[RMDB]
RNA sequence: GGGAACGACUCGAGUAGAGUCGAAAAACGCCAGUGUACGCACUGGCGAAGGCUGUGCCGGGUAGAGAGGGCAGUGGGAGGUAAGAGCUCUUCACCCUUCACCACCUUCUCCACCCGGCAUGGCCAAGGGAUAUACCUGAUUCGUCAGGUAUAUCCCAAAAGAAACAACAACAACAAC
Reactivity to 2A3 in 0.01 (KOAc 150mM, MgCl2 10mM, bicine 150mM(pH8.5), 24C), signal-to-noise 4, nucleotides 027 to 126: a000c000g000c000c000a020g000u000g020u020a040c270g020c100a000c010u010g010g000c000g010a050a050g000g000c000u010g000u000g010c000c010g000g000g000u010a000g000a010g000a000g000g020g010c070a050g040u070g020g030g010a050g020g000u080a150a050g030a050g100c080u060c040u300u070c050a110c010c010c000u040u020c020a030c040c000a020c000c010u000u010c000u000c010c000a010c000c000c020g000g000c000a000u000g000g000c000c000a000a010
Reactivity to DMS in 0.01 (KOAc 150mM, MgCl2 10mM, bicine 150mM(pH8.5), 24C), signal-to-noise 2, nucleotides 027 to 126: a160c000g000c000c000a010g000u000g050u030a090c230g030c010a010c000u010g000g000c000g010a030a040g000g010c000u000g010u000g000c010c000g000g000g000u000a050g000a010g000a020g000g000g040c080a160g020u000g000g010g010a040g010g000u000a030a040g000a280g030c300u020c040u000u000c090a030c030c000c020u000u000c000a000c010c030a250c010c000u000u000c000u010c010c010a000c000c000c000g000g000c000a010u000g000g000c010c030a000a030
The record gives the reactivity of an RNA of 177 nucleotides to 2A3 and DMS.
As a SHAPE reagent, 2A3 marks flexible, mostly unpaired nucleotides at the ribose 2'-OH.
Reactivities are given for positions 27 through 126.
For DMS the reverse transcriptase was MarathonRT.